[RMDB]
RNA sequence: GGGAACGACUCGAGUAGAGUCGAAAAUCGUUUUUCGGAUGAAAUAUGCCAGUGAACGUAUAUAUUCCAUUCGUGGAAUCAUACGGUAGGAUACUCGAUAUUCUACUGUCGUGCUCGCGGUUGAUCUACCUAUGUCACCCUUCGGGGUGACAUAGGUAAAAGAAACAACAACAACAAC
Reactivity to 2A3 in 0.01 (KOAc 150mM, MgCl2 10mM, bicine 150mM(pH8.5), 24C), signal-to-noise 1, nucleotides 027 to 126: u040c000g000u000u020u040u050u040c100g000g010a000u040g110a000a030a000u230a170u250g040c000c000a030g010u040g150a050a000c000g120u040a020u000a000u000a000u140u000c030c030a020u030u060c300g070u090g020g020a060a000u000c000a020u010a010c010g000g060u060a000g000g000a000u000a030c030u110c160g090a070u000a000u030u000c000u000a000c000u000g040u010c060g020u010g000c020u000c030g020c040g060g060u000u040g020a070u000c000u050

Structure probing data (2A3) for a 177-nucleotide construct.
The reactions ran in a buffer of 150 mM KOAc, 10 mM MgCl2 and 150 mM bicine (pH 8.5), at 24 C.